RNA sequence: GGGAACGACUCGAGUAGAGUCGAAAAGGAUACUGGGUAGGGGGCUCUAGGGGGCAGGCCUUUUUCCUAUCCUGCCCUCUAACCCCCGGGGGUGUAACCCGUGAACCUUAAAGCCUGGGCUAUAAGCCAUGUAUGUGCGUUUCGACGCACAUACAUGAAAAGAAACAACAACAACAAC
Reactivity to DMS in 0.01 (KOAc 150mM, MgCl2 10mM, bicine 150mM(pH8.5), 24C), signal-to-noise 1, nucleotides 027 to 126: g020g000a130u010a040c050u010g000g010g030u000a130g050g000g000g000g000c050u010c020u000a000g030g000g030g000g020c020a000g000g010c300c060u020u000u000u000u010c070c050u010a090u000c010c010u000g000c000c000c010u000c000u000a000a050c000c000c010c000c020g000g000g000g030g050u010g020u000a070a030c010c010c000g020u000g000a160a070c020c000u000u000a090a100a150g020c030c000u010g020g000g010c080u000a120u020a080a090g020c140
Structure probing data (DMS) for a 177-nucleotide construct. High DMS reactivity at an A or C suggests that its Watson-Crick edge is free. Reactivities are rounded to 0.1 and cut off at 0 and 3. For DMS the reverse transcriptase was MarathonRT. The RNA was probed in 150 mM KOAc, 10 mM MgCl2 and 150 mM bicine (pH 8.5) at 24 C. Source: RMDB library OK2TRN, as collected in RNAgym.